[RMDB]
RNA sequence: GGGAACGACUCGAGUAGAGUCGAAAAAACGCUGUGGCGCGGCGGGUCCGAGCGGGAUCUCCACCGAUUGUUCGCGCAUUGCGGUGGUGUCGGCCAGGCCGAUCCCCAGCGCGGAAAGCACGCCGGCGCGUUUAGAAUUCUUCGGAAUUCUAAACGCAAAAGAAACAACAACAACAAC
Reactivity to 2A3 in 0.01 (KOAc 150mM, MgCl2 10mM, bicine 150mM(pH8.5), 24C), signal-to-noise 1, nucleotides 027 to 126: a000a000c080g000c030u090g030u090g090g000c030g000c040g070g000c010g000g040g050u070c010c010g000a010g000c050g100g030g010a060u070c090u000c030c000a020c010c000g020a020u080u030g070u120u150c120g000c010g010c130a010u010u220g120c030g000g000u010g000g010u060g060u030c030g050g000c020c000a110g240g060c000c010g060a070u130c020c000c020c000a130g000c000g000c000g020g020a090a010a000g090c020a010c050g010c050c020g090g000c050
Reactivity to DMS in 0.01 (KOAc 150mM, MgCl2 10mM, bicine 150mM(pH8.5), 24C), signal-to-noise 2, nucleotides 027 to 126: a040a030c040g010c030u010g010u000g010g000c040g020c100g000g000c000g000g000g010u000c010c010g010a050g020c020g030g010g000a130u010c140u010c000c000a030c000c010g010a060u000u020g010u020u000c250g000c300g000c040a040u000u000g030c030g010g000u000g040g000u010g000u000c070g000g030c050c110a180g000g030c010c000g040a060u000c060c000c000c060a120g020c000g000c020g000g000a030a110a140g030c050a060c050g010c010c010g010g000c070